[RMDB]
RNA sequence: GGGAACGACUCGAGUAGAGUCGAAAACAUACUUGUCCUAUGCCUCAGUUUCCUCACUGGAAAAACAGAAGGGAUAAUAGCACCCAUCCCAAGGGCAGAGGCAUAAAUCAAGGUAAAGCAUUGCCUGUAAUGCCUAGAUAGCAGGGACAGUUCAGGAAUAUGAUCUCACGUUCGCGUGAGAUCAUAUAAAAGAAACAACAACAACAAC
Reactivity to 2A3 in 0.01 (KOAc 150mM, MgCl2 10mM, bicine 150mM(pH8.5), 24C), signal-to-noise 2, nucleotides 027 to 156: c030a110u180a060c020u040u120g010u040c010c030u000a030u010g000c000c000u040c040a090g010u000u050u020c030c000u110c050a160c030u030g050g110a130a080a070a070a070c000a000g040a110a060g070g000g000a020u080a110a060u080a070g030c060a160c020c020c010a010u040c030c010c010a020a030g000g000g000c040a020g000a000g000g080c000a010u020a010a010a010u050c050a030a080g100g040u110a160a100a000g040c080a080u100u140g110c010c020u030g080u150a080a030u030g000c000c000u050a100g070a140u050a040g090c070a010g010g000g020a020c010a030g040u070u070c020a020g080g080a060
Reactivity to DMS in 0.01 (KOAc 150mM, MgCl2 10mM, bicine 150mM(pH8.5), 24C), signal-to-noise 2, nucleotides 027 to 156: c050a140u010a020c040u000u020g000u000c020c020u010a040u020g010c020c000u010c000a150g000u000u000u000c020c000u000c130a150c130u010g010g020a140a060a060a130a110c040a080g000a140a180g010g000g010a070u000a030a080u010a090g050c140a090c000c020c010a080u000c020c030c030a120a130g070g010g040c020a090g000a020g000g000c000a040u000a020a130a090u000c040a100a060g040g030u000a010a050a110g020c130a100u000u000g020c000c010u000g000u010a020a120u000g020c040c020u030a090g000a140u000a120g000c080a160g000g000g000a100c080a060g000u030u010c030a090g010g010a190
The record gives the reactivity of an RNA of 207 nucleotides to 2A3 and DMS.
As a SHAPE reagent, 2A3 marks flexible, mostly unpaired nucleotides at the ribose 2'-OH.
For DMS the reverse transcriptase was MarathonRT.
The reactions ran in a buffer of 150 mM KOAc, 10 mM MgCl2 and 150 mM bicine (pH 8.5), at 24 C.
The 2A3 profile rests on 1,283 reads.
For DMS, 2,628 sequencing reads were counted.